[RMDB]
RNA sequence: GGGAACGACUCGAGUAGAGUCGAAAAUUAUUAGUAUCAGUCACAUGAAGGACUUUACGUAGAGUGACGAUUCCACUAUCUGUGGUACGAACGGUUUCAUCUUCUUUGAUGCCAUCACCCAGAUGUUCUAUAAACUUGGUAUCCUCGUCCGAUUUCACACCUUCCUUAGGUUCGCCUAAGGAAGGUGAAAAGAAACAACAACAACAAC
Reactivity to DMS in 0.01 (KOAc 150mM, MgCl2 10mM, bicine 150mM(pH8.5), 24C), signal-to-noise 2, nucleotides 027 to 156: u000u000a060u010u020a150g020u000a100u000c030a080g020u010c120a140c110a160u010g020a080a150g020g000a080c030u000u000u010a060c070g000u000a160g000a050g000u030g010a130c070g010a170u000u000c030c020a100c090u000a090u000c090u000g020u000g010g030u000a060c110g030a060a050c050g090g030u000u020u000c000a030u000c220u000u000c130u000u010u030g030a090u010g010c000c030a120u000c080a060c000c000c000a050g000a040u000g010u000u000c040u000a180u000a070a030a130c020u000u030g010g010u000a060u000c050c080u000c020g080u010c020c000g000a120u000u000u000c030a230
Reactivity to 2A3 in 0.01 (KOAc 150mM, MgCl2 10mM, bicine 150mM(pH8.5), 24C), signal-to-noise 4, nucleotides 027 to 156: u130u090a070u050u120a020g100u050a100u130c060a050g180u140c050a050c060a110u140g100a090a080g080g020a010c000u010u070u050a020c050g060u090a010g000a010g010u040g080a080c040g060a110u000u010c020c000a030c010u020a040u000c010u010g110u200g110g000u070a070c090g020a200a090c110g020g020u070u090u070c030a030u010c050u300u000c030u100u170u070g020a010u020g000c010c010a030u040c000a030c010c000c000a000g020a020u010g010u090u040c060u040a140u090a110a110a110c040u040u020g070g000u090a050u080c010c040u050c030g070u010c040c070g110a110u040u050u060c070a060

Structure probing data (DMS and 2A3) for a 207-nucleotide construct.
The reactions ran in a buffer of 150 mM KOAc, 10 mM MgCl2 and 150 mM bicine (pH 8.5), at 24 C.
For DMS, 2,483 sequencing reads were counted.